Structure probing data (DMS) for a 177-nucleotide construct. For DMS, 1,005 sequencing reads were counted.
RNA sequence: GGGAACGACUCGAGUAGAGUCGAAAAGAUAUGGAAUCCUGAACGGAGCAAUGUUUACGAGCAGCUGGUCGGAAACGACCAGGCUGCGAUGAGUAACCGCAUUGCUCCGUUCAGGAUUCCUAAGUCGCGAUUCAAUCUUCUUCGGAAGAUUGAAUCGAAAAGAAACAACAACAACAAC
Reactivity to DMS in 0.01 (KOAc 150mM, MgCl2 10mM, bicine 150mM(pH8.5), 24C), signal-to-noise 1, nucleotides 027 to 126: g010a020u000a300u010g000g000a000a020u000c000c000u000g000a030a000c000g000g020a020g020c000a010a010u000g020u000u000u000a020c020g020a280g030c000a040g050c010u000g020g000u010c000g040g010a050a130a300c020g020a010c000c000a010g020g000c000u000g010c000g000a070u000g000a260g020u000a000a060c300c300g020c010a010u010u010g000c000u000c010c010g000u000u000c020a010g010g000a010u000u000c000c000u000a010a060g000u000c070g020